[RMDB]
Annotation:
The record gives the reactivity of an RNA of 207 nucleotides to 2A3 and DMS. For 2A3, 1,068 sequencing reads were counted. Reactivities are given for positions 27 through 156. The data come from the RNA Mapping Database (RMDB), library M2RFPK. For 2A3 the reverse transcriptase was SuperScript II with manganese. For DMS, 1,644 sequencing reads were counted.
RNA sequence: GGGAACGACUCGAGUAGAGUCGAAAAGGCUGCGUAUCACUCUAGGGUACGUGAUAGUGCGAUAUAAGAAGCACUGGUACAUGCCGGCAGGGGCAGUUAAGAGAUGGCCGCAGUCUCGUGUCCCUGCAAAAGGAGUUCUCGUUCGCGAGAACUCCAAUCUACCGAAGAACUUCGGUUCUUCGGUAGAAAAAGAAACAACAACAACAAC
Reactivity to 2A3 in 0.01 (KOAc 150mM, MgCl2 10mM, bicine 150mM(pH8.5), 24C), signal-to-noise 2, nucleotides 027 to 156: g010g000c000u010g000c050g020u040a070u120c030a060c150u110c110u160a070g120g000g000u000a000c010g040u040g050a100u200a060g000u000g000c020g040a020u060a020u040a300a090g170a130a000g000c000a000c000u000g000g020u090a060c040a080u160g000c000c010g030g030c070a040g060g000g030g070c000a030g040u080u120a090a030g010a000g020a040u050g070g050c050c100g010c040a010g030u000c000u010c010g010u040g020u010c000c000c000u000g060c010a000a000a000a030g000g010a000g000u000u000c000u000c000g050u060u050c190g000c010g130a000g020a000a000c000u000c000c000a000a000
Reactivity to DMS in 0.01 (KOAc 150mM, MgCl2 10mM, bicine 150mM(pH8.5), 24C), signal-to-noise 1, nucleotides 027 to 156: g000g030c020u000g030c000g030u000a060u010c050a130c050u020c040u000a120g040g020g000u000a020c050g040u010g010a030u000a000g010u000g050c000g000a280u000a110u020a220a170g040a150a300g010c000a000c000u000g010g030u000a030c030a200u000g030c000c020g000g010c000a070g020g030g000g000c020a020g030u000u000a070a100g020a030g000a050u000g030g020c160c110g040c100a250g020u030c020u000c000g050u000g030u000c000c000c000u010g050c050a050a020a130a100g010g030a030g050u000u000c010u000c010g010u000u020c300g010c000g000a020g030a030a000c000u000c000c000a000a020